[RMDB]
RNA sequence: GGGAACGACUCGAGUAGAGUCGAAAAUGAUAUGGAACAUCCGUCUGAGUCGUCAGACAUGAUUCGUACAUCGGAAACGAUGUGCCGAUCAACAGCUGACGACUCAGACGGAGUGUUCCUAAGUCUGCUUUUGACAUGUCUUCGGACAUGUCAAAAGAAAAGAAACAACAACAACAAC
Reactivity to DMS in 0.01 (KOAc 150mM, MgCl2 10mM, bicine 150mM(pH8.5), 24C), signal-to-noise 3, nucleotides 027 to 126: u010g010a020u010a300u000g010g010a030a010c000a040u000c000c010g050u020c000u010g030a010g010u000c010g010u000c000a000g000a040c150a250u000g030a000u000u000c300g000u000a000c000a000u000c000g030g010a220a150a240c000g000a000u000g010u000g000c000c070g000a010u000c010a030a090c300a120g000c000u000g000a020c010g000a010c010u000c010a000g000a000c000g000g010a000g010u010g020u000u000c040c010u000a020a100g010u000c020u000g010